[RMDB]
RNA sequence: GGGAACGACUCGAGUAGAGUCGAAAAUGCGUAAUAGCUUACUCAUCGAGUGAUCCUGCGCCGAAAAUGAUUGGCGAUCAAGCGUUAUACCGAAGCUCUGGACUUUGCCGCAAGGCAGAGUGGUAGACGUAGUAACGCGGUUCGCCGCGUUACUACGAAAAGAAACAACAACAACAAC
Reactivity to 2A3 in 0.01 (KOAc 150mM, MgCl2 10mM, bicine 150mM(pH8.5), 24C), signal-to-noise 3, nucleotides 027 to 126: u260g020c000g000u080a060a050u070a120g010c010u000u050a010c010u010c030a090u030c020g020a010g010u030g040a060u020c020c020u040g010c020g000c010c000g050a060a030a050a110u200g020a170u060u190g020g000c000g000a080u100c040a090a020g060c030g040u080u100a090u060a080c000c070g040a020a050g030c020u030c070u040g020g010a060c000u030u010u010g010c010c020g020c010a020a020g010g000c000a000g000a000g010u070g010g040u050a020g010a030
Reactivity to DMS in 0.01 (KOAc 150mM, MgCl2 10mM, bicine 150mM(pH8.5), 24C), signal-to-noise 2, nucleotides 027 to 126: u010g020c010g010u000a050a040u070a100g070c010u000u040a070c000u000c000a090u000c020g000a040g020u000g000a120u000c010c000u000g000c030g010c040c030g060a060a100a180a160u080g030a040u010u010g020g020c000g030a090u020c130a110a090g040c010g040u000u020a010u030a030c020c060g020a100a160g030c000u000c060u000g020g000a040c000u000u000u000g000c020c040g000c270a180a070g000g010c010a000g000a020g020u000g000g030u030a000g030a230